[RMDB]
RNA sequence: GGGAACGACUCGAGUAGAGUCGAAAAACAACAGAUAGCUGGAACCAGCGUAGAAUUCUACGCAUAUCCAUAGCGAAUGGUACCUGUAAAGAAAAUAAUGAUGGAUGUACAAGUACCAACAGCCAUCAAUGCCAUGGUGAUGUCAAUCACAUAUGCACCUGACCGCUACGUUCGCGUAGCGGUCAGGAAAAGAAACAACAACAACAAC
Reactivity to 2A3 in 0.01 (KOAc 150mM, MgCl2 10mM, bicine 150mM(pH8.5), 24C), signal-to-noise 1, nucleotides 027 to 156: a000c000a030a000c000a000g150a160u060a030g030c000u000g040g000a090a130c000c080a010g030c000g000u020a020g060a250a300u300u000c000u020a000c000g000c030a000u060a000u020c000c000a060u110a060g060c020g030a090a020u070g000g000u000a000c000c000u000g100u060a040a040a040g120a060a010a000a040u240a010a050u220g060a080u110g000g010a000u000g000u040a020c030a010a100g040u000a020c000c000a000a000c030a110g050c000c000a030u000c000a000a040u060g040c030c000a020u050g000g040u000g000a020u050g200u190c110a070a100u000c000a010c030a040u170a000u050g000c020a030
This 207-nucleotide RNA was probed chemically with 2A3. The data come from the RNA Mapping Database (RMDB), library OK3TST. For 2A3, 498 sequencing reads were counted. 2A3 adducts were read by reverse transcription with SuperScript II with manganese. Reactivities are given for positions 27 through 156.